[RMDB]
RNA sequence: GGGAACGACUCGAGUAGAGUCGAAAAGUUGGUAACAGAACUCGUAAAUCCACUGUUGCAACUUUUAUAGUUGCCAAUGACGAAAACUACGGCGCGGAGUACAAGCUGGCUGCGUAAGCAGUCCUCUUGACCCGUUGCUUCUGGUAGCUUCGGCUCCGAAGCCUUAUUGCUUCGGCAAUAAGGCUUCAAAAGAAACAACAACAACAAC
Reactivity to 2A3 in 0.01 (KOAc 150mM, MgCl2 10mM, bicine 150mM(pH8.5), 24C), signal-to-noise 2, nucleotides 027 to 156: g000u030u060g080g060u060a000a020c000a020g070a100a080c100u090c220g130u270a170a170a060u100c090c040a110c030u020g000u070u010g000c000a000a000c000u000u040u020u060a250u090a070g050u040u040g050c020c030a040a110u080g040a020c020g030a000a050a050a090c050u030a060c010g000g020c000g000c020g020g000a240g050u070a230c010a020a000g000c000u000g000g000c000u000g010c000g010u080a170a020g000c000a000g040u000c000c000u010c000u000u000g000a000c020c000c000g010u000u230g000c000u050u020c020u080g080g040u110a010g000c010u000u040c020g030g080c000u000c060c030